Record summary:
This 177-nucleotide RNA was probed chemically with 2A3 and DMS. For 2A3, 22,451 sequencing reads were counted. For 2A3 the reverse transcriptase was SuperScript II with manganese. For DMS, 34,622 sequencing reads were counted. The RNA was probed in 150 mM KOAc, 10 mM MgCl2 and 150 mM bicine (pH 8.5) at 24 C.
RNA sequence: GGGAACGACUCGAGUAGAGUCGAAAACAAGCCGAGAAGACCUAACACAGCAGCGAUUCCUGCAAUAGCACCUGGGAUGGUGGCAAUGAGGUGGUAGGCAUGGUCAUUAAUUCCGAUGGCGCGAGUCAUAUGGUUCUAUAUUCGUAUAGAACCAUAUAAAAGAAACAACAACAACAAC
Reactivity to 2A3 in 0.01 (KOAc 150mM, MgCl2 10mM, bicine 150mM(pH8.5), 24C), signal-to-noise 8, nucleotides 027 to 126: c030a040a030g040c030c020g090a080g030a090a020g050a040c010c010u030a070a010c050a010c010a040g020c010a000g020c030g100a070u090u040c010c000u020g000c010a020a060u060a100g030c010a020c020c040u050g030g020g040a030u050g020g030u020g030g030c020a010a090u130g020a040g090g030u030g010g040u030a020g000g000c010a020u050g030g000u030c020a050u030u160a130a090u120u010c030c040g030a060u060g020g000c020g000c020g050a010g030u040c020
Reactivity to DMS in 0.01 (KOAc 150mM, MgCl2 10mM, bicine 150mM(pH8.5), 24C), signal-to-noise 9, nucleotides 027 to 126: c110a130a140g010c030c020g010a110g010a100a080g010a080c040c030u000a060a070c100a060c070a110g020c020a040g010c100g000a140u000u000c080c010u000g010c080a080a080u010a100g010c030a040c050c030u000g010g010g010a060u000g000g020u000g010g010c050a060a060u000g010a070g010g020u000g010g010u000a040g000g000c030a070u000g010g010u000c050a050u010u000a060a150u000u000c040c030g000a080u000g010g010c030g020c090g010a100g010u010c080